Chemical mapping of a 177-nucleotide RNA with DMS and 2A3. High DMS reactivity at an A or C suggests that its Watson-Crick edge is free. Conditions: 150 mM KOAc, 10 mM MgCl2 and 150 mM bicine (pH 8.5), 24 C. For DMS, 1,532 sequencing reads were counted. 2A3 adducts were read by reverse transcription with SuperScript II with manganese. It was measured as part of the RMDB library VIROID.
RNA sequence: GGGAACGACUCGAGUAGAGUCGAAAAGGCCGCCGCGGACCUGCAAAGAAGAAGAUAGGGGCAGAGGGGGAGUGAGCCUCGUCGUCGACGAAGGGGUGCACUCCAAAGCUCCGAACUGGCGUCGUCCGAGUACCAAUAGGUUCGCCUAUUGGUACUCAAAAGAAACAACAACAACAAC
Reactivity to DMS in 0.01 (KOAc 150mM, MgCl2 10mM, bicine 150mM(pH8.5), 24C), signal-to-noise 2, nucleotides 027 to 126: g000g040c050c020g030c040c030g010c040g040g010a080c040c030u000g030c090a060a080a110g000a100a080g010a120a030g000a090u010a110g010g000g010g010c010a110g020a270g000g010g000g000g000a030g000u000g000a160g020c020c010u000c000g020u000c010g010u010c180g010a090c090g020a060a040g000g000g010g030u000g000c040a020c000u000c000c010a010a090a220g010c010u010c000c050g020a040a160c070u010g010g000c040g000u000c020g010u010c050c060
Reactivity to 2A3 in 0.01 (KOAc 150mM, MgCl2 10mM, bicine 150mM(pH8.5), 24C), signal-to-noise 1, nucleotides 027 to 126: g020g000c000c000g010c020c040g030c060g000g030a100c010c020u000g010c030a080a150a100g060a090a050g070a060a020g060a100u150a100g040g010g020g050c020a020g060a070g140g110g060g000g000a060g000u030g030a010g000c020c000u010c000g010u010c000g060u080c070g130a300c020g020a040a020g000g010g000g020u040g030c000a000c020u070c010c020a030a020a000g000c000u010c000c010g020a000a010c030u040g020g010c010g000u040c000g000u050c040c050